This 177-nucleotide RNA was probed chemically with 2A3 and DMS. The reactions ran in a buffer of 150 mM KOAc, 10 mM MgCl2 and 150 mM bicine (pH 8.5), at 24 C. Source: RMDB library OK2TRN, as collected in RNAgym.
RNA sequence: GGGAACGACUCGAGUAGAGUCGAAAAGACAAGGCUGAAGAACAACUGGUCAAAGUACCACCAGUUCAGAAGAGAGAUGACAUUGAUGGUGCUGGACCUCAUUGCUCUCUUCCCAAGCCAUGAUGCAAGUCCUUCUACUGUUCGCAGUAGAAGGACUAAAAGAAACAACAACAACAAC
Reactivity to 2A3 in 0.01 (KOAc 150mM, MgCl2 10mM, bicine 150mM(pH8.5), 24C), signal-to-noise 1, nucleotides 027 to 126: g070a030c030a050a070g020g010c020u010g070a070a010g080a070a050c020a020a000c020u020g000g000u090c100a280a180a090g080u070a060c010c010a000c000c030a020g010u020u000c040a000g010a050a000g020a030g020a000g000a020u090g020a080c020a060u000u100g030a040u180g030g000u080g050c190u160g020g210a040c010c000u030c000a020u010u020g000c000u010c010u000c000u000u000c030c000c000a010a000g000c000c000a020u150g030a040u110g030c080a070
Reactivity to DMS in 0.01 (KOAc 150mM, MgCl2 10mM, bicine 150mM(pH8.5), 24C), signal-to-noise 2, nucleotides 027 to 126: g000a180c130a110a150g010g000c000u020g030a070a200g000a080a040c090a020a110c300u000g010g000u000c060a140a070a200g030u020a030c130c130a020c030c010a110g000u000u010c030a050g000a060a050g000a090g020a070g000a230u010g000a170c100a020u000u000g020a040u010g000g040u000g000c140u000g050g020a080c010c040u000c080a040u010u000g010c020u010c020u000c050u000u000c000c050c090a110a030g010c010c020a070u000g000a070u010g020c220a180